An RNA of 177 nucleotides, treated with 2A3 and DMS and read out base by base.
RNA sequence: GGGAACGACUCGAGUAGAGUCGAAAAGUCUGCGGUCAUCAUCGACGAUGAUGUACGGGCAUGUGGACAGUCCACGGCACUGGGUCGCCCAUCUUAACGUGCUGCGCGAUAUUCAGGACCGUACCGGGACAGCUUGACUUUUCGAAGUCAAGCUGUCAAAAGAAACAACAACAACAAC
Reactivity to 2A3 in 0.01 (KOAc 150mM, MgCl2 10mM, bicine 150mM(pH8.5), 24C), signal-to-noise 2, nucleotides 027 to 126: g020u000c020u030g070c020g020g050u030c010a030u000c000a000u010c030g280a180c180g010a100u070g000a000u020g060u140a030c060g000g080g000c070a100u160g000u040g070g000a010c020a020g070u000c000c020a000c000g000g000c020a000c050u020g000g000g060u030c010g000c000c040c000a030u030c060u090u120a110a050c060g090u060g040c040u040g000c040g020c000g030a000u020a090u180u100c010a010g000g050a050c000c000g000u010a070c010c090g010g050
Reactivity to DMS in 0.01 (KOAc 150mM, MgCl2 10mM, bicine 150mM(pH8.5), 24C), signal-to-noise 2, nucleotides 027 to 126: g010u020c020u010g020c040g010g000u000c000a050u010c000a020u000c030g020a150c250g000a050u000g010a010u010g020u020a070c060g000g020g030c070a070u000g020u010g010g000a050c080a140g000u000c030c030a060c020g000g020c180a070c020u000g000g000g010u000c010g000c010c010c010a040u000c050u000u020a070a160c300g000u000g010c120u000g010c290g000c000g010a060u000a060u000u010c060a050g000g010a120c040c000g000u000a040c090c110g000g010